Structure probing data (DMS and 2A3) for a 177-nucleotide construct.
[RMDB]
RNA sequence: GGGAACGACUCGAGUAGAGUCGAAAAACUGGAAAACGCCUCGCUUUUUUCCUGUAAAACACCGCAACGCAGGAAAAGCGCAUGCUUAUCGGGACAACAACCCAACGCGGCAGGUGUACCGUUGGGCUAAUUUCGUCAUGUUCGCAUGACGAAAUUAAAAAGAAACAACAACAACAAC
Reactivity to DMS in 0.01 (KOAc 150mM, MgCl2 10mM, bicine 150mM(pH8.5), 24C), signal-to-noise 4, nucleotides 027 to 126: a090c050u010g010g030a050a040a080a100c220g010c020c040u010c050g000c000u000u000u000u020u020u010c000c000u010g010u020a060a090a110a060c100a030c070c060g000c110a100a100c220g000c000a010g000g010a020a010a000a020g010c010g020c230a060u030g020c020u010u010a170u010c070g010g010g020a070c100a090a090c110a160a130c010c000c000a010a010c030g000c160g020g000c030a090g010g010u020g000u010a060c080c000g000u010u000g000g000g030c140
Reactivity to 2A3 in 0.01 (KOAc 150mM, MgCl2 10mM, bicine 150mM(pH8.5), 24C), signal-to-noise 3, nucleotides 027 to 126: a000c020u050g040g020a010a050a000a000c030g010c010c010u010c020g010c050u040u050u000u000u090u080c000c000u010g000u020a040a020a020a040c140a040c040c000g030c090a070a030c130g000c010a000g000g000a000a010a000a000g000c020g010c030a030u170g000c010u080u110a050u130c030g050g040g050a020c020a120a010c020a030a070c120c000c000a000a010c010g000c060g020g000c030a050g020g040u040g030u050a040c010c010g000u010u000g010g000g000c010
2A3 adducts were read by reverse transcription with SuperScript II with manganese. The reactions ran in a buffer of 150 mM KOAc, 10 mM MgCl2 and 150 mM bicine (pH 8.5), at 24 C. Values cover nucleotides 27 to 126.